[RMDB]
RNA sequence: GGGAACGACUCGAGUAGAGUCGAAAACUAGCUGGAAAAAGCCAAGCUCUUGAAGGAUCAGUUACAAGGGUCACAACCUGUAUGAUCAAAUUUGCCAUACGAUCCGUGUGGAUAUCAGAAGCCCAGACUGUCACUGUGAGCUUGCAGAAAAGUUUGCAGUAAAUCCAAAGUUCGCUUUGGAUUUACUAAAAGAAACAACAACAACAAC
Reactivity to 2A3 in 0.01 (KOAc 150mM, MgCl2 10mM, bicine 150mM(pH8.5), 24C), signal-to-noise 4, nucleotides 027 to 156: c040u040a030g030c030u040g110g050a210a070a050a050a030g040c030c000a020a000g010c000u000c010u070u170g170a130a020g070g030a060u140c030a010g010u030u030a070c090a160a210g030g010g010u130c090a040c040a230a120c030c010u060g020u080a070u100g100a050u140c080a020a130a280u130u110u140g040c010c000a010u010a020c020g150a280u080c150c080g000u010g010u010g000g010a030u020a030u120c020a010g040a090a010g020c000c000c010a020g020a030c010u010g000u050c080a000c130u020g020u010g110a000g000c000u020u000g020c010a010g100a020a110a000a010g020u060u110u140g030c050
Reactivity to DMS in 0.01 (KOAc 150mM, MgCl2 10mM, bicine 150mM(pH8.5), 24C), signal-to-noise 2, nucleotides 027 to 156: c000u000a060g020c010u020g040g000a060a060a060a220a160g000c060c030a030a120g010c020u020c010u010u020g040a130a080g010g020a100u000c010a020g010u000u010a120c040a100a090g010g030g000u000c020a120c040a090a160c130c060u000g030u010a060u000g020a100u000c040a040a070a190u010u000u000g040c010c030a080u000a030c020g030a060u000c080c040g020u020g040u010g030g010a120u000a060u010c060a130g010a110a170g010c040c010c000a190g020a010c020u000g000u030c090a150c040u000g020u000g000a080g030c040u000u010g020c040a140g000a070a070a090a150g000u000u000u010g050c090